This 207-nucleotide RNA was probed chemically with 2A3.
Reactivities are given for positions 27 through 156.

RNA sequence: GGGAACGACUCGAGUAGAGUCGAAAAGGCUCAAACUAAUUAUUACAUUGAUAACUCACUUAAAUUGAACAUGCCAUUUUACGCUUACUAUGACAUGUUCAAAAAGCAGCAACUUCUAAAAUGGCUUAAAAAUAACCGUGAUGAUGUCAUCGGCGGAUAAUGCGCAUGAGUUCGCUCAUGCGCAUUAAAAAGAAACAACAACAACAAC
Reactivity to 2A3 in 0.01 (KOAc 150mM, MgCl2 10mM, bicine 150mM(pH8.5), 24C), signal-to-noise 1, nucleotides 027 to 156: g000g000c000u000c160a130a070a070c000u070a300a150u160u170a080u020u050a160c030a080u020u040g070a080u100a190a140c020u080c130a030c000u020u130a050a300a130u160u070g000a000a000c000a000u130g000c000c000a020u080u090u060u130a130c090g100c070u100u050a000c020u030a000u000g000a000c000a020u000g000u000u000c000a020a000a000a000a000g020c000a000g000c000a010a020c000u000u050c030u100a000a000a120a210u150g000g070c020u070u050a000a000a000a000a300u050a020a020c000c000g000u000g020a000u000g000a050u230g020u000c020a000u030c030g230g000c000g000g010a020